Chemical mapping of a 207-nucleotide RNA with 2A3 and DMS. It was measured as part of the RMDB library M2RFPK. 2A3 adducts were read by reverse transcription with SuperScript II with manganese. For 2A3, 4,437 sequencing reads were counted. The reactions ran in a buffer of 150 mM KOAc, 10 mM MgCl2 and 150 mM bicine (pH 8.5), at 24 C.
RNA sequence: GGGAACGACUCGAGUAGAGUCGAAAAAGUCACCUAUUACGCUAGGUGACAUUUGAACCAGCGAACAAUUCAGUUGCGAGAUUCGAGGUUUCAGUCUGAAUCAUAGUAGCCAUUACGAUGGCUACAACUCACUCCCGACUGUUCGCAGUCGGGAGAACCUCUGUAUAUCCUUCGGGAUAUACAGAGGAAAAGAAACAACAACAACAAC
Reactivity to 2A3 in 0.01 (KOAc 150mM, MgCl2 10mM, bicine 150mM(pH8.5), 24C), signal-to-noise 5, nucleotides 027 to 156: a000g000u010c000a000c000c000u020a030u130u230a120c140g040c090u010a000g000g000u010g000a000c000a000u020u010u090g050a030a010c010c000a020g160c000g000a000a000c020a050a130u010u000c000a000g000u000u010g000c000g000a000g000a000u000u000c000g010a030g040g050u110u200u300c030a030g110u050c010u000g030a000a010u040c040a060u070a070g000u000a000g000c000c000a010u020u040a060c240g170a010u020g000g000c000u000a000c000a000a010c010u050c030a080c010u010c000c000c000g010a000c000u010g030u040u100c210g000c160a000g010u010c010g000g000g000a000g000a000a000
Reactivity to DMS in 0.01 (KOAc 150mM, MgCl2 10mM, bicine 150mM(pH8.5), 24C), signal-to-noise 1, nucleotides 027 to 156: a130g000u010c010a000c010c000u020a040u000u010a220c230g040c300u010a020g030g000u010g000a010c000a000u000u000u000g000a100a140c000c010a110g000c030g020a090a010c040a140a110u000u000c060a060g000u020u000g000c020g020a100g010a070u000u000c000g010a200g030g020u010u000u000c060a100g000u000c050u000g040a030a060u000c130a130u000a180g010u000a020g000c000c010a020u000u000a110c260g020a120u000g010g000c000u010a000c000a020a090c170u000c080a110c000u000c020c010c000g010a020c020u030g000u000u020c260g000c000a020g020u000c010g020g010g000a010g000a000a030